Conditions: 150 mM KOAc, 10 mM MgCl2 and 150 mM bicine (pH 8.5), 24 C. Structure probing data (DMS and 2A3) for a 177-nucleotide construct. 2A3 adducts were read by reverse transcription with SuperScript II with manganese. The data come from the RNA Mapping Database (RMDB), library OK1LIB. For 2A3, 1,024 sequencing reads were counted. Reactivities are given for positions 27 through 126.

[RMDB]
RNA sequence: GGGAACGACUCGAGUAGAGUCGAAAAGAGAAAAAGAAAAGGACCACUCCUGCGGGAGUUAAGGCGCUACGGACAGCCGGGUCCAUCGCCGAAAAAGAAAAAGAAAAAGAAAAAGAAAAAGAAAGAAACCAUCCAUAUAUUUCGAUAUAUGGAUGGUAAAAGAAACAACAACAACAAC
Reactivity to DMS in 0.01 (KOAc 150mM, MgCl2 10mM, bicine 150mM(pH8.5), 24C), signal-to-noise 2, nucleotides 027 to 126: g000a200g030a040a130a070a070a100g000a080a080a120a120g000g010a020c000c040a060c000u010c000c000u000g090c200g020g010g000a000g000u050u020a090a060g010g000c000g000c250u020a080c180g040g000a120c020a290g030c060c000g000g000g030u000c000c020a060u020c230g020c000c000g050a120a020a030a040a170g000a070a040a060a060a080g010a030a030a000a080a050g000a030a080a030a020a070g000a040a050a020a050a100g000a050a080a060g010a050a200
Reactivity to 2A3 in 0.01 (KOAc 150mM, MgCl2 10mM, bicine 150mM(pH8.5), 24C), signal-to-noise 2, nucleotides 027 to 126: g020a010g050a050a080a040a020a000g060a040a180a000a020g000g010a000c000c000a010c000u000c000c000u030g050c260g080g000g000a010g000u000u040a040a050g060g000c000g030c090u140a040c090g040g010a030c000a010g020c030c000g040g000g000u000c000c000a010u070c040g040c000c010g050a080a080a000a000a010g050a010a050a020a000a030g080a000a160a000a050a050g070a020a080a000a070a010g080a040a180a020a040a000g040a030a060a000g030a070a130